[RMDB]
RNA sequence: GGGAACGACUCGAGUAGAGUCGAAAAGGGGUCUCUCGUUGUCAGUUGGGUGGUGGAGCGACGAAGUACACUGAAGCCUCCACGGUGUACAGAGCUCCACACCCAACUUGGAUUUACGAGAGACGGAGGCACCCAAAGAUGGGAUUCGUCCCAUCAAAUGUUAGCAACUCUUCGGAGUUGCUAACAUAAAAGAAACAACAACAACAAC
Reactivity to 2A3 in 0.01 (KOAc 150mM, MgCl2 10mM, bicine 150mM(pH8.5), 24C), signal-to-noise 1, nucleotides 027 to 156: g090g000g020g010u010c000u000c000u000c010g000u000u000g040u020c230a200g000u030u000g020g010g020u180g120g160u030g000g020a020g010c010g160a170c000g020a120a000g010u020a010c000a000c010u030g020a090a000g020c000c010u000c000c020a000c000g000g010u000g000u000a000c000a000g000a000g000c000u010c050c000a000c000a000c000c000c000a000a000c010u020u130g020g010a010u100u010u210a000c000g000a000g010a000g040a000c000g000g000a010g030g070c030a080c000c020c000a020a070a000g000a000u000g000g000g020a020u000u160c280g090u010c080c000c000a000u020c010a030a030